Background:
Source: RMDB library RNAMAK, as collected in RNAgym. The record gives the reactivity of an RNA of 207 nucleotides to DMS. The DMS profile rests on 4,880 reads. The RNA was probed in 150 mM KOAc, 10 mM MgCl2 and 150 mM bicine (pH 8.5) at 24 C.
RNA sequence: GGGAACGACUCGAGUAGAGUCGAAAAGCGUACUACUAUUUGUGUCAACGAAGGAACAAAGCUUUUGACGUUUAACGUCUACCCACCGCUUCCCAAAUAGGAAGCGAGGACGCUAAACGAUAAGCUUUGUUCCUUCGUUGACACAAAUAGUAUCGCACAUCUAUUUAAACUUCGGUUUAAAUAGAUGAAAAGAAACAACAACAACAAC
Reactivity to DMS in 0.01 (KOAc 150mM, MgCl2 10mM, bicine 150mM(pH8.5), 24C), signal-to-noise 2, nucleotides 027 to 156: g000c020g120u000a080c120u000a020c000u000a030u000u010u000g000u000g040u010c010a010a010c000g010a040a020g000g000a020a000c010a020a010a010g010c010u000u000u000u000g010a190c120g010u010u000u000a010a010c010g010u000c010u000a030c030c010c010a300c130c010g030c020u000u010c000c000c000a030a160a210u000a050g000g000a030a020g010c010g010a040g010g000a010c000g020c010u000a010a010a050c000g010a150u000a000a050g000c000u010u010u000g010u010u010c000c030u010u000c000g000u010u000g000a000c010a010c000a010a000a010u010a030g020u000a010u000c040g020c010a300